[RMDB]
RNA sequence: GGGAACGACUCGAGUAGAGUCGAAAAAGGACCCUGCACCUGACUGUGCUGAGGUGAGAGCAUGGUGACAGGUGGGAUCUCUGAGGGCAAAGGGGGUCCAUGAGGCUGGCUACACAUUUCUCUGCCCAUGUGACACUAUGUUCGCAUAGUGUCACAUAAAAGAAACAACAACAACAAC
Reactivity to DMS in 0.01 (KOAc 150mM, MgCl2 10mM, bicine 150mM(pH8.5), 24C), signal-to-noise 3, nucleotides 027 to 126: a060g000g010a070c010c000c030u000g010c020a030c000c010u000g000a070c010u000g010u000g010c000u000g000a140g020g010u000g010a090g000a050g010c020a010u000g010g010u000g000a190c020a010g000g010u000g000g000g000a080u010c040u010c070u010g010a140g010g000g010c040a030a100a130g000g010g000g000g000u000c010c030a070u010g010a050g000g010c110u000g020g010c050u000a120c140a090c080a080u000u000u000c040u000c030u000g000c020c040c040
Reactivity to 2A3 in 0.01 (KOAc 150mM, MgCl2 10mM, bicine 150mM(pH8.5), 24C), signal-to-noise 3, nucleotides 027 to 126: a010g060g000a030c000c010c010u040g010c030a010c020c000u020g020a020c010u020g010u030g000c010u030g080a090g050g190u160g080a130g020a010g010c000a010u020g010g020u050g090a110c000a020g030g000u010g020g000g060a040u040c080u000c030u070g080a100g010g030g000c060a010a100a080g010g000g000g010g000u000c000c020a020u070g040a040g000g010c040u030g000g010c020u150a040c090a000c010a110u050u150u040c030u040c010u040g040c000c020c000

An RNA of 177 nucleotides, treated with DMS and 2A3 and read out base by base. The data come from the RNA Mapping Database (RMDB), library OK2TRN.